Background:
Conditions: 150 mM KOAc, 10 mM MgCl2 and 150 mM bicine (pH 8.5), 24 C. Chemical mapping of a 177-nucleotide RNA with 2A3 and DMS. For DMS the reverse transcriptase was MarathonRT.

[RMDB]
RNA sequence: GGGAACGACUCGAGUAGAGUCGAAAAGGACAUCGUCUACAAGCUGGUGCCUGGCCUGCAGGAGAGUGAGUGUCCCCGGCAGGGUGGGCAGGAUCUGGUGUCCCUGGCACCGGUGUCUUGCAGAGUGCUGGUUGAUGUAGUUCGCUACAUCAACCAGAAAAGAAACAACAACAACAAC
Reactivity to 2A3 in 0.01 (KOAc 150mM, MgCl2 10mM, bicine 150mM(pH8.5), 24C), signal-to-noise 2, nucleotides 027 to 126: g020g000a010c010a050u050c060g130u040c030u070a050c030a130a030g000c030u050g010g140u030g040c000c000u040g050g130c030c020u020g000c040a050g000g040a040g000a020g100u220g060a140g070u170g090u090c020c000c000c010g030g000c020a010g040g090g150u040g000g010g000c020a020g030g030a060u020c080u120g010g000u010g030u040c070c050c010u050g020g030c010a000c010c010g000g070u060g030u000c000u030u070g000c030a050g010a030g130u120g040
Reactivity to DMS in 0.01 (KOAc 150mM, MgCl2 10mM, bicine 150mM(pH8.5), 24C), signal-to-noise 2, nucleotides 027 to 126: g010g010a080c030a050u000c040g020u010c030u010a090c090a050a070g000c140u000g010g010u000g010c000c000u010g000g000c000c010u010g010c000a050g000g000a020g010a050g010u000g020a170g040u020g020u000c020c010c000c010g000g010c040a020g000g000g010u000g010g000g020c000a030g010g010a070u010c080u000g020g010u010g000u000c030c080c100u000g010g010c030a020c040c030g000g010u000g000u000c030u000u000g010c070a070g000a130g010u000g000
For DMS, 3,092 sequencing reads were counted.
It was measured as part of the RMDB library OK2TRN.